[RMDB]
RNA sequence: GGGAACGACUCGAGUAGAGUCGAAAAACAGAAACUGGGGCACUGUCUUGGUUUUUGUAAUAAUGCUAGCAGAGUACACACAGGAAGGAAAUUGAAACUGCACCCGGUCUGGAAAGACUGGGGCGGAACCGUACCAAAUGUUCGCAUUUGGUACGGUAAAAGAAACAACAACAACAAC
Reactivity to 2A3 in 0.01 (KOAc 150mM, MgCl2 10mM, bicine 150mM(pH8.5), 24C), signal-to-noise 4, nucleotides 027 to 126: a000c010a010g040a010a050a000c010u020g000g000g020g000c070a100c300u300g050u010c010u010u010g020g010u000u000u000u000u010g060u020a050a040u130a110a020u090g060c070u050a010g030c030a010g020a010g080u110a020c050a010c000a000c010a050g010g130a060a060g030g060a070a110a030u090u070g000a120a080a030c000u020g010c010a300c030c000c000g000g000u000c000u030g040g080a160a130a010g000a020c000u000g000g010g000g000c010g000g000a040
Reactivity to DMS in 0.01 (KOAc 150mM, MgCl2 10mM, bicine 150mM(pH8.5), 24C), signal-to-noise 2, nucleotides 027 to 126: a030c020a030g010a010a020a030c030u000g010g000g000g000c010a110c270u030g020u010c000u030u000g010g000u000u000u000u000u000g000u030a100a090u040a060a090u040g000c030u000a010g020c000a040g010a180g000u010a040c060a060c060a040c130a090g030g010a060a020g010g000a040a090a170u010u020g010a090a020a090c000u000g030c000a160c000c000c000g000g020u000c000u010g000g110a150a130a010g000a000c000u000g010g000g010g000c000g000g040a070